An RNA of 177 nucleotides, treated with 2A3 and DMS and read out base by base. Source: RMDB library OK1LIB, as collected in RNAgym.
[RMDB]
RNA sequence: GGGAACGACUCGAGUAGAGUCGAAAAGGACAUCCUGGAAUGGGCAAAAACAACCGGUCUGACGUCCUACCAUCCCAUCGGAACGUGCAAGAUGGGUACGGAUUCCGCAAGCGUCGUCGAUCCGAGAGAGUACUACUCCUUUCGAGGAGUAGUACUCAAAAGAAACAACAACAACAAC
Reactivity to 2A3 in 0.01 (KOAc 150mM, MgCl2 10mM, bicine 150mM(pH8.5), 24C), signal-to-noise 6, nucleotides 027 to 126: g040g010a040c020a080u060c020c050u030g010g080a100a080u100g040g010g070c130a070a070a040a130a120c050a010a050c040c030g040g030u040c080u090g030a030c020g040u000c000c000u000a070c010c030a030u030c000c000c010a010u010c000g060g030a080a110c070g050u080g050c070a070a090g050a140u050g030g020g050u030a040c060g000g040a060u090u050c030c020g040c080a050a050g030c020g090u040c000g020u010c030g050a070u010c030c020g030a070g000a010
Reactivity to DMS in 0.01 (KOAc 150mM, MgCl2 10mM, bicine 150mM(pH8.5), 24C), signal-to-noise 3, nucleotides 027 to 126: g000g010a060c070a060u010c040c010u000g000g020a070a070u070g000g020g030c100a030a050a060a140a160c140a140a160c120c030g020g010u000c050u050g000a060c060g000u000c000c000u060a190c130c040a120u020c000c000c000a090u050c010g020g060a100a040c130g000u000g010c010a140a150g000a020u010g000g020g000u020a050c060g000g000a090u000u010c060c020g000c220a130a160g000c040g010u000c030g010u000c070g040a040u030c020c000g000a140g000a170

The reactions ran in a buffer of 150 mM KOAc, 10 mM MgCl2 and 150 mM bicine (pH 8.5), at 24 C.